This 177-nucleotide RNA was probed chemically with DMS.
For DMS the reverse transcriptase was MarathonRT.
Source: RMDB library OK2TRN, as collected in RNAgym.
The RNA was probed in 150 mM KOAc, 10 mM MgCl2 and 150 mM bicine (pH 8.5) at 24 C.
RNA sequence: GGGAACGACUCGAGUAGAGUCGAAAAUGCUGACAAAGUGAGCACAUAAUUGUUACUAUGUUGAAAAGACUUGCAGGCCGGGCGUGGUAGCUCACACCUGUAAUCCCAGCACUCUGGGAGGCUGAGAGAUCGGUGCAUAUUUCGAUAUGCACCGAUCAAAAGAAACAACAACAACAAC
Reactivity to DMS in 0.01 (KOAc 150mM, MgCl2 10mM, bicine 150mM(pH8.5), 24C), signal-to-noise 1, nucleotides 027 to 126: u010g010c070u020g000a160c030a080a070a110g020u000g010a080g040c040a050c080a040u000a100a140u000u020g020u000u000a110c120u010a050u000g000u010u010g010a090a060a100a100g000a070c070u000u000g010c030a100g020g040c060c100g020g020g040c050g000u010g000g000u010a100g030c010u000c010a070c110a060c010c030u000g010u010a040a050u010c020c020c020a080g010c180a090c160u010c140u000g010g020g020a070g020g000c040u000g000a240g000a160